[RMDB]
RNA sequence: GGGAACGACUCGAGUAGAGUCGAAAAGACGCCUGUGUGGCGAAGCGAGAAUGAGAAAGCGCCGCAGAUUAAACAGUCCAUCUAGCGGCAAGAUGGAUUGCUCGCAAAAAGAUCCAUAUCACAGAGACCCUCGCCUAUGAUUCGUCAUAGGCGAGGGAAAAGAAACAACAACAACAAC
Reactivity to 2A3 in 0.01 (KOAc 150mM, MgCl2 10mM, bicine 150mM(pH8.5), 24C), signal-to-noise 1, nucleotides 027 to 126: g120a000c050g060c020c010u000g030u030g060u090g140g030c030g000a040a000g000c000g000a030g000a030a010u080g000a040g040a080a120a110g140c060g000c000c000g030c000a000g010a060u040u170a050a080a140c080a000g010u000c010c000a000u000c000u000a070g000c070g000g010c000a030a000g000a000u040g020g030a030u010u030g030c000u000c000g000c000a230a160a000a000a000g060a050u000c000c010a020u000a030u180c080a000c030a020g120a000g000a070
Reactivity to DMS in 0.01 (KOAc 150mM, MgCl2 10mM, bicine 150mM(pH8.5), 24C), signal-to-noise 1, nucleotides 027 to 126: g000a000c100g010c100c000u030g000u000g000u090g000g020c000g000a140a070g100c040g030a040g000a120a030u000g000a160g040a000a030a170g020c160g000c170c070g090c000a050g030a040u000u170a230a040a300c140a000g000u030c040c000a000u000c000u000a120g030c040g000g000c000a240a040g000a060u000g000g000a000u000u000g000c010u000c010g240c030a040a050a300a080a030g000a010u060c160c000a010u000a160u000c100a160c170a100g000a120g010a100